[RMDB]
RNA sequence: GGGAACGACUCGAGUAGAGUCGAAAAAGUAUCGGGUUCGCCCGAUACUAGAGCACCACUCCUGCGGGAGUUAAGGCCAAACGCACAGGCGGGUGGAAAGCCAACUCAAGGGUUUCGACCCUUGAAAUCAUAAUCGGUGUUUCGACACCGAUUAUGAAAAAGAAACAACAACAACAAC
Reactivity to DMS in 0.01 (KOAc 150mM, MgCl2 10mM, bicine 150mM(pH8.5), 24C), signal-to-noise 3, nucleotides 027 to 126: a050g010u000a010u000c000g010g020g030u000u010c240g010c000c000c010g010a000u000a000c010u000a040g010a110g020c060a110c040c060a100c010u000c010c010u000g010c100g040g000g000a120g020u000u000a040a080g000g010c040c030a070a080a140c090g010c080a070c160a090g020g010c110g000g000g010u000g000g010a070a070a150g010c030c020a090a120c160u000c000a010a010g000g010g000u000u010u010c200g000a030c000c000c000u000u000g000a020a070a090
Reactivity to 2A3 in 0.01 (KOAc 150mM, MgCl2 10mM, bicine 150mM(pH8.5), 24C), signal-to-noise 1, nucleotides 027 to 126: a000g000u000a000u000c000g020g000g000u060u060c210g070c070c000c000g000a000u000a000c000u000a010g000a020g020c020a010c040c010a010c030u030c000c010u070g000c210g060g000g000a010g010u020u060a060a040g080g000c000c000a020a120a010c080g010c020a100c050a180g120g120c040g060g050g020u060g010g080a110a040a020g030c020c020a040a030c020u010c000a010a000g060g000g000u020u060u130c220g090a050c000c000c000u020u010g000a010a010a010
Chemical mapping of a 177-nucleotide RNA with DMS and 2A3. The 2A3 profile rests on 1,870 reads. For DMS the reverse transcriptase was MarathonRT. For DMS, 1,875 sequencing reads were counted. 2A3 adducts were read by reverse transcription with SuperScript II with manganese. Values cover nucleotides 27 to 126. As a SHAPE reagent, 2A3 marks flexible, mostly unpaired nucleotides at the ribose 2'-OH. It was measured as part of the RMDB library M2PK50.